[RMDB]
RNA sequence: GGGAACGACUCGAGUAGAGUCGAAAAGAACCGCGAUUCGUCGCGGUUCGAGCGCCGUAGCGCGCUACGGCGUAACGGCAGCAUUAGCGCGCAGCUGCCGACGAUCGGGUGGUUUCGACCACCCGAAACGAGUUAAGCCAUUCGUGGCUUAACUCGUAAAAGAAACAACAACAACAAC
Reactivity to DMS in 0.01 (KOAc 150mM, MgCl2 10mM, bicine 150mM(pH8.5), 24C), signal-to-noise 1, nucleotides 027 to 126: g000a030a000c000c000g080c020g020a030u000u020c170g010u000c010g020c000g010g000u000u000c000g020a100g000c000g030c000c000g010u000a020g000c090g010c260g000c000u000a000c000g010g020c020g020u000a010a130c050g010g010c000a020g000c000a050u020u020a050g030c060g000c060g030c070a130g000c000u000g000c000c010g000a030c170g010a110u000c030g040g000g030u000g010g000u000u000u010c220g000a020c020c010a010c000c000c000g010a000a070
Structure probing data (DMS) for a 177-nucleotide construct.
Source: RMDB library M2PK50, as collected in RNAgym.
The reactions ran in a buffer of 150 mM KOAc, 10 mM MgCl2 and 150 mM bicine (pH 8.5), at 24 C.